[RMDB]
RNA sequence: GGGAACGACUCGAGUAGAGUCGAAAAAUUUGGAAUCUAGGUUAGUUAAAGUUUCAUGUCCAGAAUUUACAAUACCUCAAAGGCCAUUUGAUUCGAAUGAUAUUAACAGUUUAUGUGUAUUGGUUACUACAUCUAGAGAUCAUUGUGCAAUCUCAGAGUAGAUGUUUCUCUUCGGAGAAACAUCUACAAAAGAAACAACAACAACAAC
Reactivity to 2A3 in 0.01 (KOAc 150mM, MgCl2 10mM, bicine 150mM(pH8.5), 24C), signal-to-noise 1, nucleotides 027 to 156: a000u060u060u080g040g060a040a070u010c000u010a010g000g020u070u050a030g040u030u160a280a110a000g050u050u060u120c030a040u010g090u000c030c030a010g000a080a060u080u000u000a090c010a000a090u010a080c030c030u070c080a050a050a050g070g010c000c000a070u110u110u040g130a170u120u150c050g040a060a170u070g090a030u010a020u100u060a040a060c000a090g050u140u130u090a160u120g080u000g000u000a050u080u040g040g000u020u030a000c010u040a030c040a030u060c000u030a000g000a000g000a000u090c040a060u070u140g050u030g000c030a020a040u000c000u000c000a030g000a000